[RMDB]
RNA sequence: GGGAACGACUCGAGUAGAGUCGAAAACAUUCUUUCCAUUUUGUUAGGUUGCUUUUCUGAGUGCUUAUCCUCUUAAUGUUGCCUGUUUUAAAUUACCAUUUAGCAGGCAGAUAAUGAGAGAAAGCAGAUUAACGAUUUGAAAGUAACAUUUAGGAAACAUUUAGCCUCGAUUCGUCGAGGCUAAAUGAAAAGAAACAACAACAACAAC
Reactivity to 2A3 in 0.01 (KOAc 150mM, MgCl2 10mM, bicine 150mM(pH8.5), 24C), signal-to-noise 3, nucleotides 027 to 156: c020a080u090u110c040u040u050u010c030c050a110u060u090u040u210g070u040u110a090g060g070u080u010g030c050u070u090u050u090c060u090g100a110g080u040g020c010u030u070a120u300c010c010u010c000u070u070a090a050u120g060u100u020g010c000c000u000g020u050u060u070u090a040a100a020u080u130a140c060c050a010u000u000u000a010g000c000a000g000g000c010a000g000a000u030a030a080u140g000a010g010a000g000a010a000a000g000c010a020g000a040u080u110a100a000c020g050a060u080u020u230g030a050a010a000g010u030a020a040c010a070u080u080u130a080g040g010a050a020a010
Reactivity to DMS in 0.01 (KOAc 150mM, MgCl2 10mM, bicine 150mM(pH8.5), 24C), signal-to-noise 1, nucleotides 027 to 156: c040a080u000u000c090u010u010u010c000c020a170u020u000u030u000g050u010u010a160g040g020u000u000g010c030u000u050u000u000c030u010g010a120g010u000g010c030u020u000a110u000c110c000u020c010u000u000a080a080u010g030u000u000g010c000c000u010g010u000u040u010u000a020a040a040u010u010a150c270c170a300u000u000u000a030g010c030a020g000g020c010a000g010a040u000a090a100u010g010a090g000a070g000a050a040a080g020c000a070g020a120u000u010a070a110c110g010a110u000u020u010g010a060a050a100g000u000a040a040c020a110u010u010u000a100g010g010a080a080a190
An RNA of 207 nucleotides, treated with 2A3 and DMS and read out base by base. Conditions: 150 mM KOAc, 10 mM MgCl2 and 150 mM bicine (pH 8.5), 24 C. 2A3 adducts were read by reverse transcription with SuperScript II with manganese. The 2A3 profile rests on 1,132 reads. Source: RMDB library OK3TST, as collected in RNAgym. The DMS profile rests on 2,846 reads.